This 177-nucleotide RNA was probed chemically with DMS and 2A3. DMS adducts were read by reverse transcription with MarathonRT. High 2A3 reactivity points to a flexible backbone, as in loops and unpaired stretches. High DMS reactivity at an A or C suggests that its Watson-Crick edge is free. The RNA was probed in 150 mM KOAc, 10 mM MgCl2 and 150 mM bicine (pH 8.5) at 24 C.

[RMDB]
RNA sequence: GGGAACGACUCGAGUAGAGUCGAAAAGAUAUGGACGUGACAAGAGACAACAGCUCGAGGUUCGGAAACGAACCCGAGACAUGUCUACACGUCCUAAGUCAAACAACGAGCGUUCGCGCUCGUUGAAGUUCAAAGACAAGUUCGCUUGUCUUUGAACAAAAGAAACAACAACAACAAC
Reactivity to DMS in 0.01 (KOAc 150mM, MgCl2 10mM, bicine 150mM(pH8.5), 24C), signal-to-noise 4, nucleotides 027 to 126: g010a030u010a050u000g000g010a010c000g040u000g000a220c240a200a230g010a060g020a010c000a170a180c100a150g000c000u000c000g000a130g020g010u000u000c000g020g010a010a020a040c000g010a010a010c000c010c000g010a010g010a020c070a070u010g010u000c010u000a180c010a000c000g000u000c010c010u000a000a070g010u000c000a150a140a300c020a000a010c010g000a000g020c000g040u000u030c250g010c010g050c010u010c000g020u000u000g000a030a110
Reactivity to 2A3 in 0.01 (KOAc 150mM, MgCl2 10mM, bicine 150mM(pH8.5), 24C), signal-to-noise 5, nucleotides 027 to 126: g000a000u020a010u060g010g010a000c010g010u020g030a080c170a300a100g070a020g040a300c100a300a030c070a300g000c000u010c020g040a300g010g010u000u010c000g000g000a000a020a000c000g000a000a000c000c000c000g010a000g010a010c010a070u300g000u000c010u020a010c000a000c010g020u000c000c000u000a010a000g000u000c030a090a060a180c000a010a010c010g000a020g010c000g020u110u120c290g020c000g000c130u010c000g000u000u000g000a010a010